[RMDB]
RNA sequence: GGGAACGACUCGAGUAGAGUCGAAAAUCAGUGGAGCACUGGAGAAAGAAAAUGUGGUAUACACACACACACACACACAGACACACACACCAUAGAAUACUACUCAGCCAUAAAACAAGAAUAAAUUGUGUCUUUUGCAGCAACAUGGGUGGAACUAGAGUACUGCAUUAUUCGUAAUGCAGUACUCAAAAGAAACAACAACAACAAC
Reactivity to 2A3 in 0.01 (KOAc 150mM, MgCl2 10mM, bicine 150mM(pH8.5), 24C), signal-to-noise 5, nucleotides 027 to 156: u060c020a010g030u040g020g040a050g020c060a010c070u040g040g010a040g050a060a100a010g070a010a080a030a030u070g020u020g000g030u070a070u120a090c080a050c010a010c000a000c000a000c010a000c000a000c010a000c010a000c030a000g030a040c050a050c000a010c010a010c000a020c040c010a020u030a090g070a070a030u040a100c020u010a030c010u010c030a010g010c040c010a060u140a080a110a030a020c050a080a040g130a120a060u190a150a060a070u100u040g000u000g010u000c000u020u060u040u070g020c030a040g000c000a000a040c010a080u060g020g000g040u030g000g020a030a030c030u040a060
Reactivity to DMS in 0.01 (KOAc 150mM, MgCl2 10mM, bicine 150mM(pH8.5), 24C), signal-to-noise 2, nucleotides 027 to 156: u000c040a050g010u010g030g040a120g020c040a130c030u000g030g040a100g010a100a080a150g000a100a040a050a060u000g010u000g010g000u010a130u020a120c030a100c030a040c060a040c020a090c040a100c120a090c000a050c000a060c050a080g020a150c020a060c050a040c070a050c020a020c010c010a130u000a080g000a140a080u010a050c020u000a050c010u000c020a070g000c020c010a070u000a030a040a060a050c070a040a070g010a070a090u000a060a060a060u010u000g010u000g000u000c020u000u000u000u000g010c030a050g000c020a010a060c050a050u010g010g010g010u010g020g010a100a120c060u000a140
Background:
The record gives the reactivity of an RNA of 207 nucleotides to 2A3 and DMS. Source: RMDB library OK3TST, as collected in RNAgym. For 2A3 the reverse transcriptase was SuperScript II with manganese. The RNA was probed in 150 mM KOAc, 10 mM MgCl2 and 150 mM bicine (pH 8.5) at 24 C.